Source information:
The record gives the reactivity of an RNA of 177 nucleotides to DMS and 2A3. Values cover nucleotides 27 to 126. DMS adducts were read by reverse transcription with MarathonRT. The DMS profile rests on 2,251 reads. It was measured as part of the RMDB library OK2TRN.

RNA sequence: GGGAACGACUCGAGUAGAGUCGAAAACUUAUCCGGUAACUAUCGUCUUGAGUCCAACACGACUUAACGGGUUGGCAUGGAUUGUAGGCGCCGCCCUAUACCUUGUCUGCCUCCCCGCGGUGCAUGGGUUGACUCCUCUAUUCGUAGAGGAGUCAACAAAAGAAACAACAACAACAAC
Reactivity to DMS in 0.01 (KOAc 150mM, MgCl2 10mM, bicine 150mM(pH8.5), 24C), signal-to-noise 3, nucleotides 027 to 126: c080u020u000a090u010c060c030g010g000u030a090a210c110u000a050u010c100g000u000c040u000u000g000a120g000u010c010c040a030a080c060a060c080g010a160c150u000u030a130a120c100g010g000g030u010u000g010g030c020a080u000g000g000a100u010u010g010u010a000g000g010c130g000c100c050g010c070c010c030u010a080u000a070c070c010u000u000g010u000c050u000g020c040c030u000c000c020c010c070g010c060g020g010u000g010c050a060u000g020g010
Reactivity to 2A3 in 0.01 (KOAc 150mM, MgCl2 10mM, bicine 150mM(pH8.5), 24C), signal-to-noise 2, nucleotides 027 to 126: c040u080u060a040u110c030c000g050g010u040a070a050c020u010a030u100c030g050u000c050u020u130g080a090g010u030c020c020a070a030c060a010c060g130a050c050u130u110a160a060c010g020g000g040u000u010g000g000c000a030u060g030g010a050u090u080g010u040a010g000g060c090g090c070c040g020c020c000c010u060a070u070a080c000c030u030u060g020u060c030u020g010c000c000u090c000c000c000c000g000c010g030g020u050g010c040a080u090g130g000